[RMDB]
RNA sequence: GGGAACGACUCGAGUAGAGUCGAAAAGCAGUUUCACUCACUGUAGACUCUGAGCGCAGAGUGUCAGUCGUGCUACCACAUGCACGUGAUCAGUGUAUGUGUGAACACUGACUGACGACACAAUCGCUUGUGUCCUAUAUAAUGAAACUGGUGAGUCACUGGGACCAUUAUUCGUAAUGGUCCCAGUAAAAGAAACAACAACAACAAC
Reactivity to DMS in 0.01 (KOAc 150mM, MgCl2 10mM, bicine 150mM(pH8.5), 24C), signal-to-noise 2, nucleotides 027 to 156: g000c020a020g000u000u000u010c010a020c010u010c050a110c140u000g050u000a030g010a040c010u010c000u000g010a300g020c150g020c060a040g010a110g020u000g010u000c020a030g020u000c010g020u000g000c000u000a230c090c030a030c030a040u000g000c010a010c010g020u020g010a110u000c110a150g020u010g010u000a000u000g030u000g010u000g020a050a030c020a000c010u010g020a010c010u000g010a020c000g030a030c020a030c010a030a140u000c110g040c120u000u000g020u010g030u000c000c000u000a030u000a020u000a030a030u000g000a020a020a000c000u000g020g040u010g000a160g030u010c080
Reactivity to 2A3 in 0.01 (KOAc 150mM, MgCl2 10mM, bicine 150mM(pH8.5), 24C), signal-to-noise 6, nucleotides 027 to 156: g090c010a000g000u000u010u010c020a020c020u020c000a110c030u010g010u010a000g000a000c000u010c000u010g040a080g200c050g000c030a010g000a000g010u000g000u000c000a010g000u000c000g000u010g000c020u070a110c000c000a010c000a000u010g010c010a010c020g060u150g120a240u300c150a120g000u000g010u000a010u000g020u000g030u040g040a030a010c000a020c050u210g000a000c000u000g000a000c000g000a000c000a000c000a010a180u290c070g010c210u030u010g000u000g000u000c000c000u000a010u000a000u000a020a030u030g020a000a010a000c000u020g030g110u080g050a030g110u100c070